[RMDB]
RNA sequence: GGGAACGACUCGAGUAGAGUCGAAAACUCGCCGGUGUUAAAGACUAAACGAUAGCCAUCGGUAAGGUUAAGUUGGGCAAUAACCUGAUUAAUUGACUGCAUAUAGCCUGCACGUGCUUCUGGCGACCAUGCUUGCUCAGUUCGCUGAGCAAGCAUGAAAAGAAACAACAACAACAAC
Reactivity to 2A3 in 0.01 (KOAc 150mM, MgCl2 10mM, bicine 150mM(pH8.5), 24C), signal-to-noise 2, nucleotides 027 to 126: c010u000c030g000c000c040g000g000u060g010u090u180a170a100a000g080a040c040u120a130a080a000c080g200a180u100a080g070c030c020a040u030c070g010g040u050a040a050g080g000u030u010a010a050g010u100u030g020g000g030c020a060a100u010a060a090c000c010u090g040a190u110u100a170a050u000u100g070a080c030u020g020c000a020u110a010u000a150g020c020c020u040g000c030a050c060g060u020g040c000u020u040c020u000g000g010c020g000a010c010
Reactivity to DMS in 0.01 (KOAc 150mM, MgCl2 10mM, bicine 150mM(pH8.5), 24C), signal-to-noise 2, nucleotides 027 to 126: c020u000c020g020c000c030g020g070u000g040u000u020a060a030a160g000a110c070u000a080a100a140c140g030a110u000a080g040c160c030a050u000c050g020g010u000a080a050g030g000u000u000a020a130g000u030u000g030g000g000c070a100a080u020a030a070c020c060u010g000a070u020u010a080a060u020u000g000a050c010u000g000c020a060u000a080u020a100g010c040c000u000g030c120a070c120g040u010g000c040u020u000c030u000g010g010c000g000a100c160